[RMDB]
RNA sequence: GGGAACGACUCGAGUAGAGUCGAAAACGCACUCGGAGCUUAAUAACCUGCGCUGAGCCCUUCUCCCCCAGCUUGCCUGUGUCCUAGGGAAUUGGAAGGUCAUCCUUCACAGGAUCGUGUGGAAGUCAUUACUCGUGAGUGUUCGCACUCACGAGAACUAUGGGAGUUUGUUCGCAAACUCCCAUAGAAAAGAAACAACAACAACAAC
Reactivity to 2A3 in 0.01 (KOAc 150mM, MgCl2 10mM, bicine 150mM(pH8.5), 24C), signal-to-noise 1, nucleotides 027 to 156: c020g000c010a060c010u030c010g060g030a010g000c040u120u110a070a080u100a200a300c040c030u030g030c010g000c080u050g020a070g030c020c000c050u160u130c100u100c020c040c050c020c020a000g000c000u010u240g040c000c000u070g000u000g010u000c020c020u040a110g000g030g020a050a140u180u080g040g000a010a000g060g010u090c000a030u080c020c020u050u080c040a020c000a020g010g010a020u060c060g040u020g000u060g070g030a020a030g010u040c030a080u020u050a070c000u000c000g000u000g000a010g000u010g040u050u080c090g020c070a020c000u010c000a000c000g010a000g000a000a000
Reactivity to DMS in 0.01 (KOAc 150mM, MgCl2 10mM, bicine 150mM(pH8.5), 24C), signal-to-noise 2, nucleotides 027 to 156: c050g030c050a050c020u000c040g040g000a090g030c020u000u000a070a140u010a110a170c090c060u000g010c030g000c030u010g020a060g030c020c020c050u000u000c040u000c040c000c010c000c030a100g010c050u010u000g000c000c020u000g010u000g010u000c030c010u010a130g030g030g000a080a150u010u000g000g000a080a070g010g000u020c070a150u000c010c030u000u000c080a080c110a070g000g000a050u010c100g000u010g000u000g000g010a100a210g010u000c060a060u010u000a210c010u000c000g060u000g020a060g000u010g050u010u010c280g000c030a050c010u000c020a000c000g010a010g020a020a070
This 207-nucleotide RNA was probed chemically with 2A3 and DMS. For 2A3 the reverse transcriptase was SuperScript II with manganese. For DMS, 3,336 sequencing reads were counted. Reactivities are given for positions 27 through 156. For DMS the reverse transcriptase was MarathonRT.